[RMDB]
RNA sequence: GGGAACGACUCGAGUAGAGUCGAAAAACCAGCGGCGUCGACGAGGUCCACCGGCGACCUAUAGUAGGCAAAUUAGGUCUGUCUGGACGCCUGGUAUAAUCUCGUGUUUCAUGAACCGCCUGUGGUGGGCGGUUCGGAGGUUCGCCUCCGGACCGCCAAAAGAAACAACAACAACAAC
Reactivity to DMS in 0.01 (KOAc 150mM, MgCl2 10mM, bicine 150mM(pH8.5), 24C), signal-to-noise 2, nucleotides 027 to 126: a040c040c000a070g000c030g030g010c050g000u020c040g010a030c110g020a010g020g010u010c240c140a010c090c040g000g010c010g000a080c010c000u000a060u060a060g010u030a050g010g000c050a040a130a170u070u010a060g010g000u000c010u010g020u030c070u050g000g000a090c000g000c020c000u020g020g020u000a070u040a050a060u000c000u010c000g000u010g000u000u000u000c060a050u040g020a210a130c010c000g000c010c000u060g040u010g010g000u010g000
Reactivity to 2A3 in 0.01 (KOAc 150mM, MgCl2 10mM, bicine 150mM(pH8.5), 24C), signal-to-noise 2, nucleotides 027 to 126: a000c000c000a010g050c000g110g010c030g020u090c000g000a040c000g020a020g000g040u060c000c060a010c060c000g000g020c000g010a020c010c000u010a020u100a110g180u040a030g020g120c040a010a130a070u150u050a110g000g010u000c000u010g020u010c030u050g030g020a040c010g020c000c010u040g020g030u130a090u070a050a090u030c000u000c020g020u010g030u030u120u090c190a170u090g090a100a090c030c000g070c040c150u180g010u120g050g020u120g110
Source: RMDB library OK1LIB, as collected in RNAgym. Structure probing data (DMS and 2A3) for a 177-nucleotide construct. For DMS the reverse transcriptase was MarathonRT. The DMS profile rests on 3,366 reads.